Chemical mapping of a 177-nucleotide RNA with 2A3 and DMS.
The reactions ran in a buffer of 150 mM KOAc, 10 mM MgCl2 and 150 mM bicine (pH 8.5), at 24 C.
[RMDB]
RNA sequence: GGGAACGACUCGAGUAGAGUCGAAAAUUGGAAAGGGUGUGCUAGGCCUGGAUACUGCCGUCCUUCGUGACUUAAAUGGGAAGGGCUUAGUUGACGUGCUGAACUCUCUUAGUAACAUUGACAGUUCCCGACUAUUAGUGUUCGCACUAAUAGUCGGAAAAGAAACAACAACAACAAC
Reactivity to 2A3 in 0.01 (KOAc 150mM, MgCl2 10mM, bicine 150mM(pH8.5), 24C), signal-to-noise 3, nucleotides 027 to 126: u120u090g030g010a070a070a040g000g040g010u100g020u050g060c020u020a020g030g000c020c010u030g020g000a050u070a120c020u020g050c030c030g000u020c020c000u070u070c050g080u100g030a030c060u110u160a050a110a110u230g080g020g000a020a020g040g030g000c000u040u050a010g030u020u090g030a040c040g040u060g000c010u020g010a050a040c000u020c000u000c000u070u000a050g010u100a150a010c030a100u030u090g130a040c030a020g040u070u040c000
Reactivity to DMS in 0.01 (KOAc 150mM, MgCl2 10mM, bicine 150mM(pH8.5), 24C), signal-to-noise 5, nucleotides 027 to 126: u020u010g010g010a070a090a080g010g000g040u000g010u010g010c040u010a070g000g000c030c010u000g020g000a200u020a080c040u000g020c210c180g010u000c010c010u000u020c220g010u020g000a090c040u010u010a050a090a130u010g000g000g010a230a090g000g000g000c010u000u000a030g010u000u000g000a100c100g020u000g030c040u010g010a080a090c060u000c060u010c030u000u000a120g010u000a050a100c100a090u000u010g000a080c150a120g000u010u010c030
Description:
For 2A3 the reverse transcriptase was SuperScript II with manganese.